[RMDB]
RNA sequence: GGGAACGACUCGAGUAGAGUCGAAAAGAAAAAACUUGCUACAAUCAUUUUCGUACCAGUGCGUUCCUCCAAACCACCACGCUCACGUUGAUGCGAAGUUGGUCUGAAGGAGUUCAUUGGUACACAAGCAUAAAUGGAUGUUCGCAUCCAUUUAUGCAAAAGAAACAACAACAACAAC
Reactivity to 2A3 in 0.01 (KOAc 150mM, MgCl2 10mM, bicine 150mM(pH8.5), 24C), signal-to-noise 4, nucleotides 027 to 126: g020a020a110a020a000a000a020c070u110u100g040c040u070a080c090a110a140u090c050a180u030u130u160u270c080g010u010a000c000c000a010g000u000g020c000g010u020u000c000c000u000c010c000a020a000a000c000c010a000c030c000a020c010g020c000u020c000a120c160g210u100u200g040a040u140g000c010g010a040a000g020u070u030g000g000u010c000u000g010a000a010g000g000a010g000u010u020c000a000u010u010g000g020u010a000c000a000c000a000a000
Reactivity to DMS in 0.01 (KOAc 150mM, MgCl2 10mM, bicine 150mM(pH8.5), 24C), signal-to-noise 1, nucleotides 027 to 126: g000a040a110a100a060a090a110c090u010u000g010c080u000a110c220a060a060u000c060a150u010u000u010u000c110g000u000a030c000c000a000g020u000g000c040g010u000u000c000c010u000c020c010a020a010a010c010c000a000c020c010a190c020g000c000u000c030a090c300g020u000u010g000a000u000g020c000g000a070a130g010u000u010g010g000u000c060u010g020a010a010g000g000a020g020u000u000c020a020u000u000g030g010u000a010c010a050c090a040a090

Overview
This 177-nucleotide RNA was probed chemically with 2A3 and DMS. Conditions: 150 mM KOAc, 10 mM MgCl2 and 150 mM bicine (pH 8.5), 24 C. For DMS, 1,124 sequencing reads were counted.